[RMDB]
RNA sequence: GGGAACGACUCGAGUAGAGUCGAAAAUCGGCGCACCGGGCAUCGUCGAGGCCCUGCGCCUGGGCGCGGACAUCGUGAUCACCGGCCGGGUGGUCGACAGCGCGGUGGUCAGCGCCGCCCUGGUGCAGUAAUUAUCGUCGUUCGCGACGAUAAUUACAAAAGAAACAACAACAACAAC
Reactivity to 2A3 in 0.01 (KOAc 150mM, MgCl2 10mM, bicine 150mM(pH8.5), 24C), signal-to-noise 2, nucleotides 027 to 126: u050c020g000g000c010g000c050a090c090c010g030g070g020c040a070u100c060g100u030c040g010a010g000g050c000c000c010u100g000c080g000c000c010u030g010g000g010c010g000c010g000g030a020c040a070u100c030g050u020g020a050u070c000a020c060c020g070g040c060c030g160g040g020u150g020g100u030c050g030a110c050a080g020c040g000c010g050g020u030g010g090u070c060a140g130c040g000c040c000g000c000c010c020u050g000g010u040g000c020a020
Reactivity to DMS in 0.01 (KOAc 150mM, MgCl2 10mM, bicine 150mM(pH8.5), 24C), signal-to-noise 3, nucleotides 027 to 126: u010c040g020g020c020g010c220a070c080c060g000g010g020c070a140u010c050g020u010c050g000a040g010g010c020c000c050u010g000c040g020c000c000u000g000g000g010c020g020c040g020g000a070c080a040u010c060g040u000g000a040u010c040a050c070c010g000g010c030c020g000g010g030u010g030g000u000c010g020a060c180a090g000c140g000c000g000g040u000g010g000u000c030a090g010c070g000c060c060g000c010c010c000u020g020g010u010g000c020a140